[RMDB]
RNA sequence: GGGAACGACUCGAGUAGAGUCGAAAAGUCCUGCCAUGAGACCGCAACGAGAGUAUGUCGCAUCGAAUGGACUCGGGGAGUCGGCAGCUUGCCCCACGGAUGAGCGCCUAAUGCCGGCAUUCGGGAAAAUAGACUGGAUAGUUCGCUAUCCAGUCAACGUGGCCUUAAAGUUCGCUUUAAGGCCACGAAAAGAAACAACAACAACAAC
Reactivity to 2A3 in 0.01 (KOAc 150mM, MgCl2 10mM, bicine 150mM(pH8.5), 24C), signal-to-noise 2, nucleotides 027 to 156: g060u000c000c000u010g040c020c050a030u070g040a010g010a030c040c090g060c040a060a020c050g070a040g030a040g120u160a160u250g050u050c020g030c040a080u030c020g060a070a070u030g000g000a050c030u010c020g000g000g000g030a130g010u010c000g030g000c010a010g010c030u080u120g030c000c020c070c080a080c070g070g000a240u110g000a030g030c030g060c070c040u060a070a050u080g030c070c010g020g000c050a000u040u030c070g000g000g050a100a060a000a050u170a040g000a000c000u000g010g010a000u000a000g030u040u050c140g000c100u020a000u000c000c000a000g000u000c030a020a020